[RMDB]
RNA sequence: GGGAACGACUCGAGUAGAGUCGAAAAGAUAUGGACUCGAUUCUAUGUUGCGCAUAUCGGAAACGAUAUGACCCGCAUACAUAGACAGGAUUGUCCUAAGUCAAAGCCGUAUGUUCGCAUACGGCAAGAAUGUUGAUAGGUUCGCCUAUCAACAUUCAAAAGAAACAACAACAACAAC
Reactivity to 2A3 in 0.01 (KOAc 150mM, MgCl2 10mM, bicine 150mM(pH8.5), 24C), signal-to-noise 8, nucleotides 027 to 126: g030a020u090a050u150g020g000a010c000u030c100g170a230u160u000c020u020a000u010g020u020u030g020c030g010c000a000u000a000u000c000g010g030a080a070a020c010g000a010u000a010u020g080a120c050c020c040g000c010a060u140a300c010a010u010a000g020a020c070a020g220g130a260u140u250g000u020c010c010u030a140a020g060u060c080a130a060a070g000c000c000g000u000a010u010g040u020u080c300g000c160a000u000a000c000g000g000c000a000a000
Reactivity to DMS in 0.01 (KOAc 150mM, MgCl2 10mM, bicine 150mM(pH8.5), 24C), signal-to-noise 8, nucleotides 027 to 126: g010a030u010a300u010g010g000a020c010u000c080g000a260u010u000c000u000a010u000g000u000u000g000c010g000c010a020u000a000u000c010g000g000a110a100a150c000g010a010u000a000u000g000a110c210c180c090g010c020a030u010a020c010a010u000a010g010a010c300a080g010g000a110u010u010g010u000c000c000u000a040a140g000u010c050a060a100a130g000c000c000g000u000a010u000g000u000u010c210g020c000a010u000a000c000g000g010c000a010a010